[RMDB]
RNA sequence: GGGAACGACUCGAGUAGAGUCGAAAAUUGGCAGCAACAGACCCCAGUGAGGCUUUCGAGAAAUUCGUAAGUCUCUUUGCUACUUUAAUGACUUUUUCUGGUAAUGUAGAUCUUGAUGCGUUAGCUAUAGGUACAAGGUUCGCCUUGUACAAAAGAAACAACAACAACAAC
Reactivity to 2A3 in 0.01 (KOAc 150mM, MgCl2 10mM, bicine 150mM(pH8.5), 24C), signal-to-noise 9, nucleotides 027 to 129: u060u040g030g010c020a000g030c000a020a040c010a050g070a140c000c010c000c010a020g040u020g050a010g000g000c000u010u020u030c020g010a020g030a090a300a120u160u000c000g000u010a000a000g000u000c000u000c000u030u050u020g000c000u010a040c010u080u110u140a120a100u170g110a080c020u080u100u050u110u080c050u100g070g020u080a080a080u090g030u040a040g010a090u020c030u040u090g030a040u050g020c020g050u050u040a030g010c030u060a050u070a200g120
Reactivity to DMS in 0.01 (KOAc 150mM, MgCl2 10mM, bicine 150mM(pH8.5), 24C), signal-to-noise 9, nucleotides 027 to 129: u010u000g020g000c040a060g030c040a040a050c100a120g020a130c010c000c000c010a110g000u030g000a000g040g010c010u000u010u010c020g000a030g000a090a110a130u070u000c030g000u010a000a000g050u000c000u000c040u000u000u000g000c010u030a000c060u020u020u040a080a090u010g000a090c090u040u030u010u030u020c050u070g020g020u020a010a060u030g020u000a050g010a080u010c050u000u000g020a080u040g020c020g020u010u010a080g020c040u010a080u000a090g020